[RMDB]
RNA sequence: GGGAACGACUCGAGUAGAGUCGAAAAAAUCAACUCAGUUGAAAGCCGCGAGCGCUUUGGGUGCGAACUCAAAGGACAGCAGAUCCGGUGUAAUUCCGGGGCCGACGGUUAGAGUCCGGAUGGGAGAGUACCUAGAUUAAUUCGUUAAUCUAGGUACAAAAGAAACAACAACAACAAC
Reactivity to 2A3 in 0.01 (KOAc 150mM, MgCl2 10mM, bicine 150mM(pH8.5), 24C), signal-to-noise 6, nucleotides 027 to 126: a000a000u070c030a020a010c030u030c150a080g040u080u040g090a100a050a010g020c010c000g050c070g040a040g010c010g010c000u000u010u010g010g020g010u040g040c060g060a050a010c000u000c010a010a000a000g050g040a080c030a040g000c000a010g030a120u030c000c010g010g000u010g020u060a040a060u100u010c010c000g010g010g030g010c020c010g040a070c010g000g020u040u060a040g010a010g050u010c020c030g080g040a120u090g040g030g010a070g010a020
Reactivity to DMS in 0.01 (KOAc 150mM, MgCl2 10mM, bicine 150mM(pH8.5), 24C), signal-to-noise 7, nucleotides 027 to 126: a070a060u010c050a040a060c020u010c090a130g000u010u010g000a070a130a110g010c020c000g000c100g010a150g000c030g010c000u000u010u000g000g000g000u010g000c300g000a170a010c000u000c000a010a010a030g000g000a110c020a050g000c010a070g010a130u020c010c010g000g010u000g000u020a080a220u010u010c010c010g000g000g000g000c040c010g000a120c040g010g000u000u010a110g000a210g010u010c020c030g010g000a080u010g010g010g010a100g010a230